Structure probing data (DMS and 2A3) for a 207-nucleotide construct. Reactivities are given for positions 27 through 156. For 2A3 the reverse transcriptase was SuperScript II with manganese. It was measured as part of the RMDB library OK3TST. The 2A3 profile rests on 958 reads.
RNA sequence: GGGAACGACUCGAGUAGAGUCGAAAAUCAGCUUUGGCAAGAAGGAGAAAAAGGUGAGUGGCUGUUGGACAGGAAACAAUUCAGGUUAUGAGACUCUGCCACCUGCCAGCCCAACUCCUGCUCUAUUUCAGAAAACAGGUUUGCAUACUUGCUAACCGUUAAAGGGAUGGUUCGCCAUCCCUUUAACAAAAGAAACAACAACAACAAC
Reactivity to DMS in 0.01 (KOAc 150mM, MgCl2 10mM, bicine 150mM(pH8.5), 24C), signal-to-noise 3, nucleotides 027 to 156: u000c060a140g000c030u000u000u000g020g040c030a050a040g020a100a050g010g000a070g000a080a060a090a100a120g010g020u010g010a080g030u000g000g010c010u010g000u000u000g030g010a140c070a100g030g000a130a080a050c050a050a120u000u000c050a050g030g010u020u000a110u010g000a200g010a080c040u000c030u010g010c000c030a050c050c030u000g010c010c020a120g010c050c010c000a050a220c030u000c000c000u000g000c040u000c030u000a110u000u000u010c010a200g000a090a060a090a060c050a070g000g030u000u000u000g030c030a130u000a060c050u000u000g020c020u000a070a090c060c070
Reactivity to 2A3 in 0.01 (KOAc 150mM, MgCl2 10mM, bicine 150mM(pH8.5), 24C), signal-to-noise 2, nucleotides 027 to 156: u030c010a010g040c010u140u130u160g040g010c050a070a040g030a010a030g050g020a050g020a040a120a020a020a010g040g020u080g030a160g010u040g010g000c040u040g050u120u080g050g020a090c010a010g130g000a050a100a000c030a070a050u210u220c060a050g050g070u110u120a100u240g090a060g010a080c010u020c010u130g000c040c000a050c000c000u000g010c010c010a060g000c000c000c000a000a010c020u030c000c030u010g040c000u000c010u070a270u080u200u080c030a030g080a110a060a050a050c050a060g050g020u000u000u000g000c020a030u040a270c050u100u020g000c010u060a000a090c000c020